Structure probing data (2A3 and DMS) for a 177-nucleotide construct. The data come from the RNA Mapping Database (RMDB), libraries RFM100 and RFMREP.
RNA sequence: GGGAACGACUCGAGUAGAGUCGAAAACGAUCAAACCUUCACCGGCUAAGGCUUCAGUAGCAGGACCCACGCAAAGAUUAUUUUUAACGCCAUCUUGCAUGUCUUUGUUACCGCCUUUACCAAUGCCGUCGUAUGUUUAGUUCGCUAAACAUACGACAAAAGAAACAACAACAACAAC
Reactivity to 2A3 in 0.01 (KOAc 150mM, MgCl2 10mM, bicine 150mM(pH8.5), 24C), signal-to-noise 9, nucleotides 027 to 126: c040g030a040u130c090a070a050a090c010c010u140u120c060a050c070c050g020g000c020u030a030a010g010g000c010u130u090c060a030g000u020a010g000c000a000g000g020a020c030c040c040a090c100g000c020a040a080a050g010a030u030u060a130u070u220u070u120u160a130a040c110g040c060c010a010u000c010u000u020g000c010a020u070g010u000c010u090u270u080g010u010u000a000c000c020g010c000c000u010u020u050a030c020c020a050a080u130g060c040c040
Reactivity to DMS in 0.01 (KOAc 150mM, MgCl2 10mM, bicine 150mM(pH8.5), 24C), signal-to-noise 4, nucleotides 027 to 126: c070g000a110u030c130a070a120a070c070c050u000u000c100a090c110c060g010g000c050u000a020a030g000g020c020u030u000c290a100g010u000a040g000c020a030g000g000a010c020c110c210a070c130g010c020a000a020a030g010a050u000u010a100u000u040u010u030u030a080a150c200g000c190c150a030u000c010u010u010g010c010a070u010g010u010c010u010u000u020g030u000u010a040c010c120g000c020c000u000u000u000a120c030c040a030a080u010g020c070c100